[RMDB]
Annotation
Source: RMDB library OK3TST, as collected in RNAgym. Structure probing data (2A3 and DMS) for a 207-nucleotide construct. The DMS profile rests on 2,036 reads. Conditions: 150 mM KOAc, 10 mM MgCl2 and 150 mM bicine (pH 8.5), 24 C.
RNA sequence: GGGAACGACUCGAGUAGAGUCGAAAACUGGAGCAAACACUACCGAUCAACACACCAAAGCAUGAGGACCCCGACCUCCGGUGGGCCCCAAGCUGGCUGAUCAACUACACCGGAGACCUGAGCACAGACAAGUCAUAUCUGCCACAUGUGACCAUAAACUCUCAUCAUUGUUCGCAAUGAUGAGAGUAAAAGAAACAACAACAACAAC
Reactivity to 2A3 in 0.01 (KOAc 150mM, MgCl2 10mM, bicine 150mM(pH8.5), 24C), signal-to-noise 4, nucleotides 027 to 156: c040u040g020g010a030g030c050a080a090a010c030a020c120u100a110c070c040g060a070u120c060a120a040c030a020c010a050c060c040a050a050a010g020c050a080u100g040a070g040g050a070c050c000c020c000g070a080c020c010u020c000c010g000g000u010g040g000g000c030c000c000c030a090a050g010c130u090g010g010c020u030g030a140u120c060a030a060c030u170a040c020a010c010c000g030g000a000g000a020c000c040u050g020a000g030c000a010c010a080g030a040c050a110a020g000u020c010a010u010a030u070c050u070g030c050c010a050c000a060u050g020u030g050a010c040c000a040u180a240a090
Reactivity to DMS in 0.01 (KOAc 150mM, MgCl2 10mM, bicine 150mM(pH8.5), 24C), signal-to-noise 1, nucleotides 027 to 156: c030u000g010g000a150g040c050a090a100a100c100a100c010u030a140c000c070g030a120u010c000a080a050c070a070c000a060c050c040a110a190a110g030c050a050u010g010a120g030g010a090c020c000c020c000g010a120c040c020u010c010c020g000g000u000g020g010g000c000c010c000c020a090a100g070c060u020g000g010c040u000g020a090u020c100a080a090c060u010a100c030a020c020c050g000g000a060g000a040c020c030u010g030a050g010c060a120c000a120g010a070c050a110a010g010u020c040a060u000a060u000c020u010g010c100c020a090c090a060u000g010u010g000a120c020c070a090u000a060a130